[RMDB]
This 207-nucleotide RNA was probed chemically with 2A3. Values cover nucleotides 27 to 156. 2A3 adducts were read by reverse transcription with SuperScript II with manganese.
RNA sequence: GGGAACGACUCGAGUAGAGUCGAAAAGCGAUGCUGUGGUUAUGCCGUGGUCAUGCCAUGGUUACGACAUCCUUUCGUACAUGUACGCCGUCAGCGUUUUGCCGUACGCGGUGUUCAGCAGGAGCAGUCUACAGCCCAGGAUCAGCAGGAUGAGGGACGUAUGGCCCUCGUUCGCGAGGGCCAUACGAAAAGAAACAACAACAACAAC
Reactivity to 2A3 in 0.01 (KOAc 150mM, MgCl2 10mM, bicine 150mM(pH8.5), 24C), signal-to-noise 1, nucleotides 027 to 156: g030c000g010a000u140g060c020u010g020u150g120g010u110u050a050u100g000c010c020g000u100g000g000u080c070a060u300g060c000c000a000u000g020g020u020u110a080c140g040a010c010a020u040c000c000u110u070u210c070g040u060a030c000a110u060g000u010a000c000g020c040c000g100u120c170a090g030c000g010u040u100u160u230g100c060c010g040u060a090c050g000c000g010g010u000g030u050u030c000a060g070c020a030g050g020a000g080c140a000g030u000c010u020a020c050a020g010c000c000c000a020g040g070a130u000c000a020g000c000a000g050g000a050u060g020a140g030g000g120a020

The RNA was probed in 150 mM KOAc, 10 mM MgCl2 and 150 mM bicine (pH 8.5) at 24 C. The data come from the RNA Mapping Database (RMDB), library OK3TST.